[RMDB]
RNA sequence: GGGAACGACUCGAGUAGAGUCGAAAAGUAAGGCAUUGGGGAGGAGGAACUGCCCUUUCACUGGCCUCAUGACAGCCCCAGCCAGCACCCCCGCUCUAGUUCCACCCACAGAAGCAAGUCUCACCCCAUACUGACACCUUUUCGAAGGUGUCAGUAUAAAAGAAACAACAACAACAAC
Reactivity to DMS in 0.01 (KOAc 150mM, MgCl2 10mM, bicine 150mM(pH8.5), 24C), signal-to-noise 2, nucleotides 027 to 126: g010u000a120a040g010g010c010a120u000u000g010g020g010g020a150g010g010a170g020g020a120a080c140u020g010c060c020c040u000u010u010c120a130c110u020g010g010c020c020u000c060a130u010g010a090c090a110g010c030c000c010c020a100g000c010c040a060g010c060a130c080c020c010c030c050g010c060u010c020u000a110g000u020u010c010c020a130c030c000c040a070c130a030g000a110a120g010c100a040a070g000u000c040u010c070a190c040c020c000c060